The record gives the reactivity of an RNA of 177 nucleotides to DMS. Source: RMDB library OK2TRN, as collected in RNAgym.
[RMDB]
RNA sequence: GGGAACGACUCGAGUAGAGUCGAAAAGGGCGUAGCUGACCCCAGCCCAUCCCAAGGUGUGGAGCGAGUGAAGAUAGUCCUGUGUGUGUUUCAGGGUGGCAUUGAUACGCGCAUUCGGGGGUUAGAGCAGACCGGUCUAUUUCGAUAGACCGGUCUGAAAAGAAACAACAACAACAAC
Reactivity to DMS in 0.01 (KOAc 150mM, MgCl2 10mM, bicine 150mM(pH8.5), 24C), signal-to-noise 2, nucleotides 027 to 126: g020g020g010c010g020u010a040g010c010u000g010a030c010c020c020c010a300g000c010c000c000a060u000c020c000c010a130a110g010g040u000g030u000g020g020a090g010c020g000a030g020u020g000a070a170g000a040u020a130g010u020c020c010u010g020u000g010u030g040u000g000u000u010u010c050a040g010g020g030u000g030g000c070a050u000u000g020a170u020a050c120g010c020g010c050a050u000u010c120g060g020g000g020g000u000u000a020g000a300g010